Overview
The data come from the RNA Mapping Database (RMDB), library RFM100. Structure probing data (DMS and 2A3) for a 177-nucleotide construct. The reactions ran in a buffer of 150 mM KOAc, 10 mM MgCl2 and 150 mM bicine (pH 8.5), at 24 C. For DMS the reverse transcriptase was MarathonRT. 2A3 adducts were read by reverse transcription with SuperScript II with manganese.

RNA sequence: GGGAACGACUCGAGUAGAGUCGAAAAUGGUUUGUUAAUCAUCAUUGGACUCAUCACACUUAGGAUUCGAUAUUCAUUUAAAAAAAGAGGAUAGAAAAAGCACUGCAAUUAUUGAUUGCAGUGCUUUCUACUCCCUAGUGUUCGCACUAGGGAGUAGAAAAGAAACAACAACAACAAC
Reactivity to DMS in 0.01 (KOAc 150mM, MgCl2 10mM, bicine 150mM(pH8.5), 24C), signal-to-noise 1, nucleotides 027 to 126: u010g000g000u010u000u010g020u010u010a120a070u000c040a030u010c050a060u000u000g000g010a070c020u000c040a100u100c110a050c100a070c070u010u000a120g010g030a090u030u020c000g000a080u010a110u020u010c020a090u040u030u060a010a000a000a070a040a090a100g020a070g000g000a110u010a100g000a060a090a060a020a000g010c000a000c000u010g000c000a000a000u000u010a110u010u040g000a090u010u000g020c000a000g020u010g020c010u030u000u000
Reactivity to 2A3 in 0.01 (KOAc 150mM, MgCl2 10mM, bicine 150mM(pH8.5), 24C), signal-to-noise 3, nucleotides 027 to 126: u030g010g070u040u030u090g130u030u170a150a100u140c050a010u000c030a030u040u140g110g020a020c030u000c020a060u080c020a020c020a030c100u020u090a030g040g080a110u150u150c090g060a060u110a060u030u030c040a060u080u210u300a160a130a030a000a000a010a020g210a150g020g010a060u100a110g170a120a100a020a000a000g000c000a000c020u000g030c000a010a020u060u030a130u220u300g090a040u000u000g000c030a010g000u000g000c000u000u000u000